[RMDB]
RNA sequence: GGGAACGACUCGAGUAGAGUCGAAAAGCGAAGAGAAUGGCCAUUUUAGGUGACACAGCCUGGGAUUUUGGAUCCUUGGGAGGAGUGUUUACAUCUAUAGGAAAGGCUCUCCACCAAGUCUUUGGAGGCUAUAAAUAUCGUUCGCGAUAUUUAUAGCAAAAGAAACAACAACAACAAC
Reactivity to DMS in 0.01 (KOAc 150mM, MgCl2 10mM, bicine 150mM(pH8.5), 24C), signal-to-noise 7, nucleotides 027 to 126: g010c080g010a100a070g000a050g000a090a070u010g010g010c000c020a150u010u010u010u010a010g020g020u000g000a090c030a020c050a170g010c020c000u000g000g010g000a030u000u020u050u040g020g000a050u000c020c010u000u020g020g000g000a090g030g020a150g010u000g000u010u030u020a190c050a040u010c010u010a040u010a090g010g010a060a080a080g000g010c010u000c020u000c010c020a180c060c050a050a050g000u010c050u000u010u010g000g010a210g010
Reactivity to 2A3 in 0.01 (KOAc 150mM, MgCl2 10mM, bicine 150mM(pH8.5), 24C), signal-to-noise 9, nucleotides 027 to 126: g060c030g050a100a010g050a020g040a120a130u170g080g020c010c010a120u060u070u040u090a030g000g010u010g030a010c010a010c010a050g070c000c010u010g000g010g000a030u040u070u100u240g130g070a030u020c000c000u040u120g030g010g020a140g050g050a140g030u010g010u010u040u050a040c020a030u010c020u040a080u100a090g160g030a070a090a030g020g000c000u000c000u000c010c000a020c010c010a040a030g050u010c040u070u050u060g080g030a050g100
Annotation
The record gives the reactivity of an RNA of 177 nucleotides to DMS and 2A3. Source: RMDB library OK1LIB, as collected in RNAgym. Values cover nucleotides 27 to 126. For 2A3, 25,123 sequencing reads were counted. For DMS, 21,152 sequencing reads were counted. The reactions ran in a buffer of 150 mM KOAc, 10 mM MgCl2 and 150 mM bicine (pH 8.5), at 24 C.